[RMDB]
RNA sequence: GGGAACGACUCGAGUAGAGUCGAAAAGGUCAGGUCCGGCCGGAUGACCGAACACAUGAGACCUCGUUGGCGAUCUCUUGUGGAUUAGGAGCGAGACGAAGUUGAUCUCAAUCGUCGAGCUCCGAAAGGGUACCUUGUCGUUCGCGACGAGGUACCCAAAAGAAACAACAACAACAAC
Reactivity to DMS in 0.01 (KOAc 150mM, MgCl2 10mM, bicine 150mM(pH8.5), 24C), signal-to-noise 4, nucleotides 027 to 126: g000g010u020c050a040g020g000u020c010c010g010g020c060c020g020g000a110u010g000a070c010c030g000a130a050c030a010c010a020u000g000a000g020a020c040c020u000c090g000u010u020g030g000c180g030a070u000c000u000c010u010u020g020u010g000g020a120u010u030a070g010g010a000g010c000g000a300g000a000c010g000a040a040g010u000u020g000a090u050c060u000c090a180a050u000c000g020u010c000g010a300g020c000u000c000c010g000a010a090a130
Reactivity to 2A3 in 0.01 (KOAc 150mM, MgCl2 10mM, bicine 150mM(pH8.5), 24C), signal-to-noise 4, nucleotides 027 to 126: g020g010u020c020a010g000g120u050c000c070g070g050c060c030g020g000a040u110g010a020c000c010g040a070a000c000a000c000a020u030g010a000g000a040c000c060u120c120g110u050u170g100g030c080g040a130u020c000u020c000u020u010g020u020g040g040a100u010u240a070g000g000a000g000c000g010a010g000a010c000g010a040a030g080u170u170g160a250u040c070u010c110a030a080u040c000g000u010c010g010a000g000c000u000c000c000g000a010a000a000
This 177-nucleotide RNA was probed chemically with DMS and 2A3. DMS (dimethyl sulfate) methylates the pairing face of unpaired adenines and cytosines. The RNA was probed in 150 mM KOAc, 10 mM MgCl2 and 150 mM bicine (pH 8.5) at 24 C. For 2A3, 2,922 sequencing reads were counted. For DMS, 6,897 sequencing reads were counted.